[RMDB]
RNA sequence: GGGAACGACUCGAGUAGAGUCGAAAAUAGUAUCAGACGUGAGCGUAGCGAACAGCACCAACUCGGUUUCCAGGUCUGCUACAGAAAUGAGAUUGGCACGUACAAGGCCAUUUCUGAUGGCCUCAGACGGUUGGAUGUCAUUCGUGACAUCCAACCGAAAAGAAACAACAACAACAAC
Reactivity to 2A3 in 0.01 (KOAc 150mM, MgCl2 10mM, bicine 150mM(pH8.5), 24C), signal-to-noise 2, nucleotides 027 to 126: u190a000g060u040a030u100c060a040g050a040c000g120u120g010a060g020c060g000u030a010g000c050g020a150a100c030a050g080c000a000c010c010a030a000c070u080c090g100g000u000u020u020c020c010a020g030g020u020c010u070g040c000u080a010c000a000g120a000a040a000u290g000a060g020a070u080u180g000g000c010a030c230g040u300a100c080a040a020g050g010c000c000a000u030u000u030c080u040g060a050u020g000g000c000c040u070c000a040g000a000
Reactivity to DMS in 0.01 (KOAc 150mM, MgCl2 10mM, bicine 150mM(pH8.5), 24C), signal-to-noise 2, nucleotides 027 to 126: u010a110g000u000a090u000c030a040g000a070c080g000u030g010a070g080c000g000u030a050g030c080g000a020a080c210a270g010c050a130c030c020a050a150c100u000c030g000g000u000u000u000c040c070a040g020g060u030c000u090g000c090u040a030c000a020g000a050a120a020u000g000a080g000a200u020u000g030g020c120a020c050g010u000a060c130a150a020g040g000c000c000a010u000u030u030c080u000g000a140u010g000g000c020c040u020c120a000g040a070